[RMDB]
RNA sequence: GGGAACGACUCGAGUAGAGUCGAAAAUUGCAAGCCUUCGGGCUUGCAAGGUGUCGGAAUGCCGAAUAUAUAAUCCUCCGCUUAAGGAUUAUACCGACUUAAGUGCCAGGCUGUUCGCAGCCUGGAAGUCUUAUUAGACGUUCGCGUCUAAUAAGACAAAAGAAACAACAACAACAAC
Reactivity to DMS in 0.01 (KOAc 150mM, MgCl2 10mM, bicine 150mM(pH8.5), 24C), signal-to-noise 5, nucleotides 027 to 126: u000u000g010c000a000a010g020c000c000u000u020c220g030g010g010c000u000u000g000c000a000a000g010g010u000g010u000c010g010g000a220a080u000g010c050c050g000a090a090u010a190u000a030u000a020a010u000c010c000u000c190c190g020c170u020u010a090a010g000g000a020u000u000a010u000a090c060c030g000a040c010u010u010a060a090g020u010g010c010c000a010g000g010c000u000g010u000u010c180g020c000a010g020c000c000u000g000g010a000a040
Reactivity to 2A3 in 0.01 (KOAc 150mM, MgCl2 10mM, bicine 150mM(pH8.5), 24C), signal-to-noise 5, nucleotides 027 to 126: u030u020g000c010a000a000g000c010c020u030u050c220g080g000g000c000u000u000g010c000a000a000g030g000u090g010u020c020g020g050a220a100u170g110c040c050g050a120a020u190a000u010a000u010a090a040u010c000c010u040c050c070g110c120u100u140a060a000g020g000a000u040u000a020u030a050c020c020g030a020c000u060u100a150a050g070u070g140c000c000a000g000g000c000u000g020u010u050c230g010c110a000g000c010c000u000g000g000a000a010
An RNA of 177 nucleotides, treated with DMS and 2A3 and read out base by base. 2A3 adducts were read by reverse transcription with SuperScript II with manganese. Conditions: 150 mM KOAc, 10 mM MgCl2 and 150 mM bicine (pH 8.5), 24 C. In probing experiments dimethyl sulfate is read out at A N1 and C N3, which are open when not base-paired. The data come from the RNA Mapping Database (RMDB), library M2PK50.